[RMDB]
RNA sequence: GGGAACGACUCGAGUAGAGUCGAAAAGAUAUGGAACGUUCCACGAACUACUUUGUCACAUCGGAAACGAUGUCCUAAAGCGUGGAGACGUUCCUAAGUCAAAGGUACCGCCUUCGGGCGGUACCAACUCAUAAUUCCCGUUCGCGGGAAUUAUGAGAAAAGAAACAACAACAACAAC
Reactivity to DMS in 0.01 (KOAc 150mM, MgCl2 10mM, bicine 150mM(pH8.5), 24C), signal-to-noise 2, nucleotides 027 to 126: g020a010u000a300u000g000g010a040a000c000g000u000u000c000c000a020c000g000a090a100c160u030a300c040u000u000u000g020u030c100a040c010a000u000c000g010g000a060a060a270c000g040a010u000g000u010c020c050u010a020a000a100g000c100g000u010g000g010a110g000a020c000g030u000u000c020c010u000a040a060g000u000c030a080a100a180g000g030u000a000c000c000g020c000c010u000u010c250g020g010g000c000g000g000u000a030c000c020a040a010
Reactivity to 2A3 in 0.01 (KOAc 150mM, MgCl2 10mM, bicine 150mM(pH8.5), 24C), signal-to-noise 1, nucleotides 027 to 126: g020a010u090a030u160g010g000a000a010c010g000u000u030c010c010a000c020g010a080a120c120u300a060c010u220u090u070g050u160c090a000c000a050u000c010g000g000a020a110a010c020g010a030u000g030u030c000c020u160a090a030a040g010c050g000u030g010g020a290g120a050c010g030u000u030c010c000u000a090a020g010u040c020a210a050a060g010g000u010a000c060c030g000c010c020u020u170c300g100g020g000c000g000g000u010a000c000c010a000a000